Background
Structure probing data (2A3) for a 207-nucleotide construct. Values are in units of 0.01, from 0 to 300, in steps of 10. Reactivities are given for positions 27 through 156. The reactions ran in a buffer of 150 mM KOAc, 10 mM MgCl2 and 150 mM bicine (pH 8.5), at 24 C.

[RMDB]
RNA sequence: GGGAACGACUCGAGUAGAGUCGAAAAGCUUAAUAACCUGCGCUGAGCCCUUCUCCCCCAGCUUGCCUGUGUCCUAGGGAGUUGGAAGGUCAUCCUUCACAGGAUCGUGUGGAAGUCCUGCUCGGGGUCCAAACAUGGUAAUUCGUUACCAUGUUAACCAGAGAGAUGAGUUCGCUCAUCUCUCUGGAAAAGAAACAACAACAACAAC
Reactivity to 2A3 in 0.01 (KOAc 150mM, MgCl2 10mM, bicine 150mM(pH8.5), 24C), signal-to-noise 1, nucleotides 027 to 156: g010c010u070u080a040a050u090a180a260c000c050u030g070c080g000c040u070g070a070g020c000c010c030u080u040c120u060c000c000c010c000c000a010g000c010u080u140g160c000c000u050g040u010g050u130c000c010u010a030g000g000g000a000g010u020u030g040g010a030a020g010g020u030c050a100u070c000c000u080u090c060a060c040a140g030g050a100u110c090g020u050g010u070g230g000a010a000g050u000c020c000u020g010c020u000c010g030g000g090g000u000c050c000a010a000a000c000a000u000g000g000u010a010a020u030u050c030g000u020u000a000c000c010a000u000g000u000u000a020a070